[RMDB]
RNA sequence: GGGAACGACUCGAGUAGAGUCGAAAAUAAAGAACAAGCCUUACCCAAAGUCUAGAUACAACAGAGCUGUUCCAGACUCCAAGAUCAGAAUCUACGAUUUGGGUAAGAAGAAGGCUACCGUCGAUGAACUAAUCGACCACUUCGGUGGUCGAUUAGUAAAAGAAACAACAACAACAAC
Reactivity to DMS in 0.01 (KOAc 150mM, MgCl2 10mM, bicine 150mM(pH8.5), 24C), signal-to-noise 2, nucleotides 027 to 126: u000a010a140a070g000a300a110c150a150a150g000c090c000u030u000a000c010c000c000a030a000a020g000u000c000u000a000g000a010u000a020c260a060a000c300a200g000a080g020c000u000g000u010u000c050c030a160g000a200c000u000c000c120a030a220g000a170u220c060a200g000a030a010u020c000u000a000c260g010a270u000u000u000g000g000g000u010a000a080g010a080a010g000a110a000g000g040c020u000a050c040c000g020u030c050g000a030u000g050a050
Reactivity to 2A3 in 0.01 (KOAc 150mM, MgCl2 10mM, bicine 150mM(pH8.5), 24C), signal-to-noise 2, nucleotides 027 to 126: u070a000a030a010g060a070a060c060a120a000g020c000c000u000u010a000c000c000c040a020a000a050g070u000c000u000a000g000a010u050a030c110a060a000c020a100g010a010g020c000u020g170u290u120c250c030a100g040a270c000u000c060c000a160a130g020a170u130c020a010g130a130a030u000c000u010a010c170g000a000u000u000u000g000g010g000u050a000a000g020a000a020g030a050a010g000g000c060u030a030c020c100g160u070c000g060a040u180g090a020